The record gives the reactivity of an RNA of 177 nucleotides to 2A3 and DMS.

RNA sequence: GGGAACGACUCGAGUAGAGUCGAAAAGGCGGCCGUGCGCGCGGGGAUGGGUCGCGAGUCCGCGCACCGGUUGAUCUCCGAGCACGCGGUGGCGACGGCGCUGGCCAUGCGAGAACACGGCGCGGAGGCCAUGUGGAAAUUUCGAUUUCCACAUGGCAAAAGAAACAACAACAACAAC
Reactivity to 2A3 in 0.01 (KOAc 150mM, MgCl2 10mM, bicine 150mM(pH8.5), 24C), signal-to-noise 3, nucleotides 027 to 126: g110g020c050g040g020c000c010g010u010g000c030g010c000g010c010g010g030g000g020a050u080g100g010g010u010c010g000c030g020a060g230u080c150c020g020c010g000c040a030c010c010g110g060u100u200g120a040u020c010u000c000c020g010a010g010c020a010c030g010c010g000g030u040g120g010c020g000a030c030g050g020c010g000c050u030g040g000c010c020a040u100g030c050g030a130g020a100a020c050a010c090g030g000c010g010c040g050g040a110g090
Reactivity to DMS in 0.01 (KOAc 150mM, MgCl2 10mM, bicine 150mM(pH8.5), 24C), signal-to-noise 4, nucleotides 027 to 126: g000g030c020g010g000c010c010g020u000g010c050g020c020g010c020g020g000g010g000a040u010g010g010g010u000c010g010c020g010a210g020u010c110c050g020c020g020c110a060c040c010g010g020u010u020g010a040u000c020u010c020c000g000a060g010c040a090c020g010c010g000g030u000g010g010c020g010a120c090g000g000c040g010c020u000g010g000c000c040a050u000g010c070g000a100g000a110a110c090a090c050g010g000c000g010c010g020g000a180g020
The reactions ran in a buffer of 150 mM KOAc, 10 mM MgCl2 and 150 mM bicine (pH 8.5), at 24 C. Source: RMDB library OK2TRN, as collected in RNAgym. The DMS profile rests on 5,721 reads. 2A3 adducts were read by reverse transcription with SuperScript II with manganese.